[RMDB]
RNA sequence: GGGAACGACUCGAGUAGAGUCGAAAACUCUUGUUAGGUGAAAGUUGAUGGUCGCCGUGUCAGUCCAUGCCUUUGAAAACAGUUCUAUGUAGUAGGGAGUCGAGAACCUAAGAGAGUUAGAACUUGCUAUGCCUUGGACUCUUCGGAGUCCAAGGAACACUAUUUUAAACUUCGGUUUAAAAUAGUGAAAAGAAACAACAACAACAAC
Reactivity to DMS in 0.01 (KOAc 150mM, MgCl2 10mM, bicine 150mM(pH8.5), 24C), signal-to-noise 4, nucleotides 027 to 156: c030u010c020u000u000g020u000u000a050g020g010u010g010a080a070a110g020u000u010g010a110u000g010g020u000c030g040c030c050g040u000g020u010c030a100g000u000c040c040a080u000g010c040c020u020u000u010g010a100a080a070a110c060a080g010u000u000c030u000a060u010g010u000a120g020u000a110g020g020g010a100g020u000c030g000a160g010a080a060c010c010u000a030a090g010a110g010a080g000u000u010a050g000a040a120c060u000u000g010c010u000a120u000g020c000c000u000u000g010g010a030c000u000c020u000u010c300g030g010a050g010u000c000c000a010a000g000g010a010a050
Reactivity to 2A3 in 0.01 (KOAc 150mM, MgCl2 10mM, bicine 150mM(pH8.5), 24C), signal-to-noise 4, nucleotides 027 to 156: c020u000c020u040u060g170u100u070a040g040g010u050g050a100a090a060g040u080u090g040a090u040g010g020u050c040g010c070c030g040u030g030u030c040a020g020u000c010c010a030u090g050c020c020u070u080u140g100a090a090a010a030c040a040g030u060u050c060u100a100u180g060u060a060g020u020a030g030g040g030a010g020u020c000g010a010g020a130a020c000c010u020a040a000g020a000g000a000g050u020u030a020g000a040a030c020u040u070g020c030u080a060u210g040c000c000u000u000g000g000a000c000u000c000u020u030c160g080g010a000g000u000c010c000a000a000g000g000a000a000